[RMDB]
RNA sequence: GGGAACGACUCGAGUAGAGUCGAAAACGUGCGCCCCUGCGUGGGCAAUCCCUUCACUGUGACCGCAACCAUGGGUUGGAUGGGGGGCACUCACUGGGCUGGCCUGACAGUCACAGUGAAUCCUGAAAGCAUGGUUUUCACAGGAACCCACCUUCAGAUAGACUUAACAUUUCGAUGUUAAGUCUAUAAAAGAAACAACAACAACAAC
Reactivity to DMS in 0.01 (KOAc 150mM, MgCl2 10mM, bicine 150mM(pH8.5), 24C), signal-to-noise 2, nucleotides 027 to 156: c070g010u000g000c070g030c030c010c010c020u000g010c150g010u000g010g110g050c050a040a060u000c010c020c040u000u000c070a120c010u000g010u000g000a140c300c150g020c110a040a050c050c030a090u000g010g070g030u000u000g010g000a080u020g000g020g040g050g020g060c080a030c030u010c000a030c000u000g000g010g020c010u000g000g010c150c100u000g010a090c000a070g000u000c000a080c020a020g060u000g000a020a080u020c030c010u010g000a110a080a120g010c030a090u000g000g010u000u000u000u010c040a100c020a040g000g000a100a080c030c020c040a040c100c030u020u000c040a110g010
Reactivity to 2A3 in 0.01 (KOAc 150mM, MgCl2 10mM, bicine 150mM(pH8.5), 24C), signal-to-noise 3, nucleotides 027 to 156: c050g030u070g030c110g100c030c010c000c010u160g050c120g090u250g000g000g000c040a010a070u060c020c010c000u060u060c090a100c030u060g030u030g010a040c030c120g100c130a030a000c010c010a070u060g030g120g000u090u050g080g040a130u170g010g010g000g000g040g040c000a010c030u020c000a010c010u020g010g000g020c010u010g010g050c020c030u060g040a040c000a010g000u020c000a010c010a300g020u000g000a010a020u030c010c010u070g050a100a040a000g040c000a010u000g030g040u010u010u040u050c010a020c000a000g020g020a020a050c020c000c010a040c060c000u010u160c050a030g000
The record gives the reactivity of an RNA of 207 nucleotides to DMS and 2A3. For 2A3 the reverse transcriptase was SuperScript II with manganese.